[RMDB]
RNA sequence: GGGAACGACUCGAGUAGAGUCGAAAACACAAUUCUCUAAGCGAUGAGAAGCGUGUGGAAAAUUAGGGAAGGGCUACGGCUAUAAUCCAAAGAAAGCUUAUCUACAAGCGGAGGUAUUCUCAGAACGAAAACCAUUUGGCGUUCGCGCCAAAUGGAAGUGCAUAUAACCCUUCGGGGUUAUAUGCACAAAAGAAACAACAACAACAAC
Reactivity to 2A3 in 0.01 (KOAc 150mM, MgCl2 10mM, bicine 150mM(pH8.5), 24C), signal-to-noise 1, nucleotides 027 to 156: c030a000c000a040a040u100u030c040u000c030u110a240a280g140c050g140a130u090g010a100g000a040a000g020c060g010u040g040u030g000g040a080a170a000a110u100u080a070g020g010g020a080a000g000g000g040c040u090a000c070g000g010c000u040a050u110a280a120u060c030c050a000a040a000g060a010a140a000g020c010u040u020a060u050c050u050a110c040a090a070g000c050g030g010a040g040g020u060a060u120u020c040u000c050a040g070a160a000c110g000a090a000a070a000c000c000a000u000u000u000g000g000c010g000u030u090c110g000c000g020c100c020a000a000a000u000g030g030a010a010